[RMDB]
RNA sequence: GGGAACGACUCGAGUAGAGUCGAAAAGAUAUGGAUCUCCUCCCCACCGUUUACACUCCCCACCUCGGAAACGAGAGGUGUAAUGACGAGGGAGAUCCUAAGUCAAAGAUCGGGUUCGCCCGAUCAACAGCACUUCUGAGUUCGCUCAGAAGUGCUGAAAAGAAACAACAACAACAAC
Reactivity to DMS in 0.01 (KOAc 150mM, MgCl2 10mM, bicine 150mM(pH8.5), 24C), signal-to-noise 1, nucleotides 027 to 126: g010a200u000a230u030g010g000a010u000c000u000c000c000u010c050c000c000c060a300c080c010g000u050u000u000a010c060a050c030u000c030c000c000c040a300c180c000u020c000g000g000a090a040a050c050g010a060g010a040g030g000u000g030u060a050a150u000g000a020c070g000a060g020g010g000a070g000a000u000c000c000u000a010a140g000u010c020a070a070a090g000a000u020c000g000g000g000u000u000c220g010c000c000c000g020a020u000c000a050a140

Background
An RNA of 177 nucleotides, treated with DMS and read out base by base. For DMS, 578 sequencing reads were counted.